[RMDB]
RNA sequence: GGGAACGACUCGAGUAGAGUCGAAAAGAUAUGGAAUCGAUGGCGCUGAUGACCAGGGUCGGAAACGACCCUGCAAGGCGACCAUUCGAUUCCUAAGUCAAAACUGGACAUGUUCGCAUGUCCAGAACAUAUAAAGGUGCUUCGGCACCUUUAUAUGAAAAGAAACAACAACAACAAC
Reactivity to 2A3 in 0.01 (KOAc 150mM, MgCl2 10mM, bicine 150mM(pH8.5), 24C), signal-to-noise 4, nucleotides 027 to 126: g020a000u070a040u230g000g000a000a000u000c010g000a000u000g010g020c010g010c000u070g030a300u120g010a110c030c030a000g000g000g020u000c020g010g030a070a080a020c000g020a000c000c000c010u000g000c010a010a050g000g000c100g280a300c000c010a010u080u030c000g010a000u000u000c000c000u000a010a020g010u010c030a000a020a160a210c000u020g010g010a000c000a010u000g040u060u100c300g020c170a000u010g000u000c000c010a000g000a000a000
Reactivity to DMS in 0.01 (KOAc 150mM, MgCl2 10mM, bicine 150mM(pH8.5), 24C), signal-to-noise 6, nucleotides 027 to 126: g010a050u000a300u000g000g010a010a010u000c010g020a040u010g000g000c020g000c000u000g000a090u020g010a170c300c010a010g000g000g020u010c010g000g010a090a120a260c000g000a030c010c000c000u000g010c010a050a070g020g030c010g000a090c000c010a020u000u000c020g010a010u000u000c010c000u000a020a100g000u000c040a070a060a110a200c010u000g000g000a000c000a010u000g010u000u010c270g030c010a010u000g000u010c000c000a000g000a050a150
Overview: The record gives the reactivity of an RNA of 177 nucleotides to 2A3 and DMS. Source: RMDB library TTRDES, as collected in RNAgym. 2A3 adducts were read by reverse transcription with SuperScript II with manganese.